[RMDB]
RNA sequence: GGGAACGACUCGAGUAGAGUCGAAAAUCGUGUGAGUUCGUGAACGUACGAGAGUGAUCACACGAACGUUCGAGAGAUCUCUCGUGAACGAGAUCGAGAGAUCUCACACUCACGAGAACGAUCACACUCGAGUGAGAUCACGAGUGUACGAUCUCUCCUUUUAGGACGCAUUCGUGCGUCCUAAAAGAAAAGAAACAACAACAACAAC
Reactivity to DMS in 0.01 (KOAc 150mM, MgCl2 10mM, bicine 150mM(pH8.5), 24C), signal-to-noise 2, nucleotides 027 to 156: u000c030g000u000g010u000g000a110g020u000u000c080g030u030g000a100a220c120g050u010a080c000g010a220g010a220g040u000g030a080u000c000a210c040a110c020g000a090a100c020g000u010u000c030g010a110g020a090g030a030u000c000u010c000u010c000g010u000g020a160a160c190g010a060g000a060u000c000g000a210g000a290g000a020u000c000u000c000a030c110a070c140u000c010a000c020g000a100g010a060a270c090g070a030u010c000a120c100a140c010u010c060g000a080g040u000g010a150g000a170u000c020a110c010g000a250g020u010g000u000a060c030g000a090u000c050u010c030u000c030
Reactivity to 2A3 in 0.01 (KOAc 150mM, MgCl2 10mM, bicine 150mM(pH8.5), 24C), signal-to-noise 6, nucleotides 027 to 156: u050c020g010u020g000u030g070a070g030u050u070c060g000u060g110a190a110c070g060u180a020c030g040a020g010a040g180u090g050a070u040c020a020c010a000c070g020a060a040c070g050u110u060c040g010a000g000a000g000a040u000c010u000c000u000c020g000u000g020a050a040c080g020a040g010a050u020c000g000a000g000a000g000a050u000c000u000c000a000c000a000c000u010c000a010c000g010a000g010a060a020c090g020a040u060c020a020c020a020c030u000c010g010a040g050u100g030a120g020a080u100c020a000c030g010a050g030u080g020u040a050c060g010a040u010c010u010c000u010c030